[RMDB]
RNA sequence: GGGAACGACUCGAGUAGAGUCGAAAACUCCUGAGCGUGAAGCCGGCUCUUGGUGUCGCUUUGCUGCGACUGCCUUUUGCCAUUGAUGAUCGUUCUUCCUUCCCGCAAGGGUGGGUAAGAGGGAGAGCAGUUUUAGGGGUUUCGACCCCUAAAACUGAAAAGAAACAACAACAACAAC
Reactivity to DMS in 0.01 (KOAc 150mM, MgCl2 10mM, bicine 150mM(pH8.5), 24C), signal-to-noise 2, nucleotides 027 to 126: c030u000c010c010u010g020a060g000c010g070u000g000a220a180g010c080c300g000g040c010u010c010u000u000g000g020u010g000u000c000g000c010u010u010u030g000c180u030g000c030g010a000c010u030g020c010c000u000u070u000u010g020c030c020a160u000u020g020a080u040g000a210u000c010g020u010u000c020u030u010c000c010u010u000c000c010c000g020c290a070a050g000g010g020u000g000g000g000u030a030a080g000a100g000g020g020a020g000a160g000
Reactivity to 2A3 in 0.01 (KOAc 150mM, MgCl2 10mM, bicine 150mM(pH8.5), 24C), signal-to-noise 3, nucleotides 027 to 126: c010u020c000c010u040g020a030g040c010g020u060g060a050a010g030c040c020g010g000c000u010c030u030u040g030g000u040g000u000c000g040c030u140u190u300g150c240u120g000c010g010a020c040u130g070c000c000u020u020u020u010g000c010c010a110u060u200g070a070u040g010a010u050c020g040u010u000c000u000u010c000c000u010u040c000c010c020g000c090a090a130g070g050g000u010g020g000g020u050a070a050g030a030g070g010g010a020g000a000g000
An RNA of 177 nucleotides, treated with DMS and 2A3 and read out base by base. Values cover nucleotides 27 to 126. DMS adducts were read by reverse transcription with MarathonRT.